[RMDB]
Record summary: An RNA of 177 nucleotides, treated with 2A3 and DMS and read out base by base. For DMS, 3,192 sequencing reads were counted.
RNA sequence: GGGAACGACUCGAGUAGAGUCGAAAAAUCUGGUCAAAUCUGGUGUGGUUGUCAGGUAGCAAUUCUAUACAUUUGGCAAUCAGUGAAUUGAUAGGCGGUUUGCGAAUGGAUCCCUACUACCUGGUGACCAGGGGGAAUGAUUCGUCAUUCCCCCUGGAAAAGAAACAACAACAACAAC
Reactivity to 2A3 in 0.01 (KOAc 150mM, MgCl2 10mM, bicine 150mM(pH8.5), 24C), signal-to-noise 1, nucleotides 027 to 126: a000u030c040u040g020g010u090c040a060a020a120u020c070u090g040g000u050g020u040g060g050u010u000g040u030c020a020g000g030u020a020g050c010a010a070u090u000c030u130a050u010a100c020a040u020u060u030g230g000c000a000a000u040c020a010g030u040g160a110a090u200u080g090a120u140a130g060g070c040g020g020u020u020u070g020c030g050a060a020u030g010g000a010u030c000c010c000u000a020c000u010a010c010c010u000g050g000u040g050a000
Reactivity to DMS in 0.01 (KOAc 150mM, MgCl2 10mM, bicine 150mM(pH8.5), 24C), signal-to-noise 2, nucleotides 027 to 126: a080u000c040u000g010g020u000c080a070a070a090u000c070u000g000g020u000g020u010g000g020u010u000g010u000c000a010g010g000u000a020g020c060a010a100u010u010c180u000a060u010a070c020a070u000u000u010g010g040c010a040a020u000c030a070g030u000g010a090a130u010u010g010a120u010a110g000g020c050g010g010u000u000u000g010c040g000a000a020u000g000g000a050u000c000c060c000u000a090c020u000a000c020c010u010g010g010u000g010a090
Reactivities are rounded to 0.1 and cut off at 0 and 3.